[RMDB]
RNA sequence: GGGAACGACUCGAGUAGAGUCGAAAAGUGAAGCUGUGGGACGGCGCGGACGUCCUGAUCUUCACCGGUGCAGGUGAACCGUCGUCGACGGCGACACCCCCAACCCUGCCCGCAACGAUCACCGACGACUGGCCGACCGACUGGAAGUACGUCGGUCACUAGGACUGAAUUUCGAUUCAGUCCUAGUAAAAGAAACAACAACAACAAC
Reactivity to DMS in 0.01 (KOAc 150mM, MgCl2 10mM, bicine 150mM(pH8.5), 24C), signal-to-noise 2, nucleotides 027 to 156: g010u000g000a050a060g020c080u010g060u020g010g050g030a010c000g010g000c100g070c160g040g010a110c010g000u000c010c040u010g010a040u000c010u000u030c010a030c010c010g000g010u020g030c070a080g050g030u010g010a180a010c030c000g000u000c010g010u010c060g010a160c110g020g000c040g020a220c020a070c060c000c010c040c030a110a160c100c000c010u000g020c000c020c020g010c050a120a080c090g050a140u000c050a110c030c010g000a090c030g010a080c030u000g010g020c000c010g020a160c090c080g050a090c020u020g040g000a160a070g010u000a090c070g000u000c000g000g000u010c040
Reactivity to 2A3 in 0.01 (KOAc 150mM, MgCl2 10mM, bicine 150mM(pH8.5), 24C), signal-to-noise 2, nucleotides 027 to 156: g000u000g000a000a010g030c130u060g010u190g060g040g000a010c020g000g050c100g020c120g260g180a020c000g020u030c000c000u010g040a020u000c030u020u020c010a010c010c020g020g030u140g000c000a010g000g000u070g030a060a060c090c020g020u020c000g050u060c140g050a120c070g020g040c020g070a070c030a300c070c020c010c000c000a020a060c010c020c000u000g040c000c000c020g000c010a080a130c050g050a030u120c030a000c050c010g030a020c010g000a000c040u050g140g060c040c000g010a060c000c050g030a050c060u060g040g030a040a050g020u020a090c020g000u010c010g000g010u000c020
This 207-nucleotide RNA was probed chemically with DMS and 2A3. For 2A3 the reverse transcriptase was SuperScript II with manganese. Conditions: 150 mM KOAc, 10 mM MgCl2 and 150 mM bicine (pH 8.5), 24 C.